[RMDB]
RNA sequence: GGGAACGACUCGAGUAGAGUCGAAAAGGGGUAAGGCUCCCAGUAGACGACUGGGUUGAUAGGCCGGAUCUGGAAGCCAGGUAACUGGUGGAGGUGACCGGUACUAAUAGGCCGAGGGCUUGUCCUCACCCUACAAAAUAUUCGUAUUUUGUAGGGUAAAAGAAACAACAACAACAAC
Reactivity to 2A3 in 0.01 (KOAc 150mM, MgCl2 10mM, bicine 150mM(pH8.5), 24C), signal-to-noise 6, nucleotides 027 to 126: g020g000g000g030u050a060a040g020g000c020u060c010c000c010a010g010u050a060g050a130c160g020a020c020u010g020g010g000u060u090g040a050u030a010g020g000c010c010g010g000a040u020c010u030g070g150a020a000g000c010c000a010g020g020u080a220a120c000u010g010g010u030g010g030a030g030g040u050g030a160c000c000g000g000u020a050c010u010a020a080u030a070g040g000c010c020g010a010g010g050g010c030u060u090g050u090c000c000u020c030
Reactivity to DMS in 0.01 (KOAc 150mM, MgCl2 10mM, bicine 150mM(pH8.5), 24C), signal-to-noise 9, nucleotides 027 to 126: g010g000g000g010u010a120a180g010g010c020u000c010c000c000a020g010u000a130g020a150c280g010a130c010u000g000g010g010u000u010g010a070u000a030g000g010c010c000g010g000a300u010c010u000g000g010a300a220g000c010c000a020g010g000u020a130a130c010u000g000g010u000g000g010a210g000g000u000g000a080c070c010g000g000u000a030c020u000a020a060u010a130g010g010c020c010g000a100g000g000g000c110u000u000g010u000c010c030u000c220
The record gives the reactivity of an RNA of 177 nucleotides to 2A3 and DMS.
The RNA was probed in 150 mM KOAc, 10 mM MgCl2 and 150 mM bicine (pH 8.5) at 24 C.
Reactivities are rounded to 0.1 and cut off at 0 and 3.
Source: RMDB library OK2TRN, as collected in RNAgym.